[RMDB]
RNA sequence: GGGAACGACUCGAGUAGAGUCGAAAAGUUGGUGGCAGAACUCGUAAAUCCACUGCUACAAACUCAUAGUUGCCAACGACGACAACUACGCUCUGGCGGCUUAAUGCCCCAGCAGUCUCCAGGGGAUGCCUGUAAACCCGAAGAGACUGUCAGAUAGGAUAUAAUCUCCGUUCGCGGAGAUUAUAUCAAAAGAAACAACAACAACAAC
Reactivity to DMS in 0.01 (KOAc 150mM, MgCl2 10mM, bicine 150mM(pH8.5), 24C), signal-to-noise 2, nucleotides 027 to 156: g000u010u000g030g060u010g000g030c010a010g010a050a240c100u000c120g000u010a090a100a130u010c020c060a100c020u000g000c000u000a030c010a030a020a070c050u020c040a100u000a030g030u000u000g000c000c000a080a220c210g000a200c000g030a060c030a030a070c110u000a060c000g010c050u000c090u010g090g010c070g020g010c000u000u010a050a070u000g000c010c000c010c020a100g010c010a000g000u000c000u000c000c020a200g010g000g030g010a140u010g010c090c140u000g010u000a060a090a150c020c000c010g000a140a090g000a040g030a010c010u000g000u000c040a020g020a130u000a120g000
Reactivity to 2A3 in 0.01 (KOAc 150mM, MgCl2 10mM, bicine 150mM(pH8.5), 24C), signal-to-noise 3, nucleotides 027 to 156: g020u030u040g010g020u010g010g030c010a000g040a170a110c070u080c200g150u220a150a090a060u060c050c020a030c030u000g000c000u010a020c030a040a010a040c020u040c050a030u060a110g010u010u020g000c040c000a140a120c210g030a000c020g010a030c040a160a090c110u230a040c060g000c030u010c020u020g000g000c050g010g000c000u060u080a140a010u090g020c010c010c000c000a000g010c000a000g000u000c000u000c000c010a050g000g000g020g030a050u180g070c030c040u110g060u150a080a110a110c000c000c000g030a060a000g000a000g000a000c000u010g010u010c000a000g020a090u210a100g080
Overview:
The record gives the reactivity of an RNA of 207 nucleotides to DMS and 2A3. The 2A3 profile rests on 1,405 reads. The RNA was probed in 150 mM KOAc, 10 mM MgCl2 and 150 mM bicine (pH 8.5) at 24 C. Values cover nucleotides 27 to 156. 2A3 adducts were read by reverse transcription with SuperScript II with manganese.